[RMDB]
RNA sequence: GGGAACGACUCGAGUAGAGUCGAAAACACCUCUGAGCCAAUCACAGAGGCCCUGGGGAGAAAGGCUUCUGAUUGGAUAAGCCAGGGACACACUGUCAACCCCAGCGCUAGGCCUGGGAAUUAGCCCCUUCAAGAAGGUAUUCGUACCUUCUUGAAGAAAAGAAACAACAACAACAAC
Reactivity to 2A3 in 0.01 (KOAc 150mM, MgCl2 10mM, bicine 150mM(pH8.5), 24C), signal-to-noise 7, nucleotides 027 to 126: c040a030c010c000u000c040u040g070a070g040c010c020a040a040u050c020a060c020a140g050a040g040g000c010c000c000u050g010g010g030g010a090g130a070a100a010g000g010c000u030u000c020u040g160a180u060u130g070g010a040u070a140a020g020c020c010a020g030g030g020a020c020a010c010a020c130u110g020u150c040a050a120c000c000c000c000a010g010c040g020c100u110a050g040g120c010c010u010g010g020g000a050a040u100u060a070g040c010c000c000
Reactivity to DMS in 0.01 (KOAc 150mM, MgCl2 10mM, bicine 150mM(pH8.5), 24C), signal-to-noise 5, nucleotides 027 to 126: c200a240c050c010u000c030u000g010a110g030c010c010a060a060u010c040a130c090a020g000a050g010g000c010c010c040u000g010g010g000g000a150g010a120a100a120g010g010c010u000u000c050u010g000a050u010u000g000g020a110u000a080a090g000c030c010a060g010g010g010a070c090a070c120a110c110u000g000u000c080a110a140c130c030c050c010a040g010c140g010c110u010a070g000g010c070c010u010g000g000g000a070a080u010u010a080g000c000c010c020